[RMDB]
Structure probing data (2A3) for a 177-nucleotide construct. Conditions: 150 mM KOAc, 10 mM MgCl2 and 150 mM bicine (pH 8.5), 24 C.

RNA sequence: GGGAACGACUCGAGUAGAGUCGAAAAUCUUCCACUGAAAGCCCGAUCAAUUUAACAUUUCUCUUGUCGAAUUCCGGCUUCAAUUUGGCGAAUGCGCUGACUUCGGUGGUGCAGACAGGGGUGAAAACCAGCAGUCGAGGUUCGCCUCGACUGCUGGAAAAGAAACAACAACAACAAC
Reactivity to 2A3 in 0.01 (KOAc 150mM, MgCl2 10mM, bicine 150mM(pH8.5), 24C), signal-to-noise 1, nucleotides 027 to 126: u000c040u040u000c040c000a040c090u060g080a050a000a020g100c020c000c000g040a020u050c090a250a120u030u150u160a160a130c100a110u000u050u110c040u000c000u000u020g020u040c010g000a010a000u120u000c000c070g000g050c040u000u010c040a040a120u040u000u130g040g030c070g010a150a150u260g000c000g030c000u000g110a230c010u000u000c040g000g010u100g000g040u070g100c020a040g000a040c040a020g000g000g000g000u010g000a070a060a000a020